[RMDB]
RNA sequence: GGGAACGACUCGAGUAGAGUCGAAAAGAUAUGGAUCGUGAACGGGAGCGACAUGUUCGGAAACGAACAUUCGCGACGAUCGUUACGAUCCUAAGUCAAAACUUAUGCUCGUUCGCGAGCAUAAGAAGACCUCAUGAUAGUUCGCUAUCAUGAGGUCAAAAGAAACAACAACAACAAC
Reactivity to 2A3 in 0.01 (KOAc 150mM, MgCl2 10mM, bicine 150mM(pH8.5), 24C), signal-to-noise 2, nucleotides 027 to 126: g010a000u030a010u110g000g010a010u010c010g030u110g280a050a030c010g010g030g080a190g020c010g010a030c070a300u010g010u000u010c000g000g000a010a030a020c000g010a010a010c000a000u000u030c010g010c010g220a030c020g050a070u030c010g020u010u030a000c010g000a000u020c000c010u000a000a010g020u000c020a030a000a110a160c000u000u000a010u010g000c010u000c010g060u050u080c280g030c020g220a010g000c000a010u010a000a000g000a000a020
Reactivity to DMS in 0.01 (KOAc 150mM, MgCl2 10mM, bicine 150mM(pH8.5), 24C), signal-to-noise 2, nucleotides 027 to 126: g000a030u010a230u010g010g010a000u010c010g020u010g020a050a010c020g010g000g000a080g020c020g000a020c300a010u000g010u000u010c000g000g000a070a030a130c000g010a030a010c000a000u000u010c010g020c000g020a110c300g000a040u020c030g020u000u000a020c020g000a010u000c000c000u000a020a070g000u000c020a100a110a140a200c010u000u000a000u000g020c000u000c000g010u000u020c260g010c000g010a000g030c010a000u000a000a000g010a170a110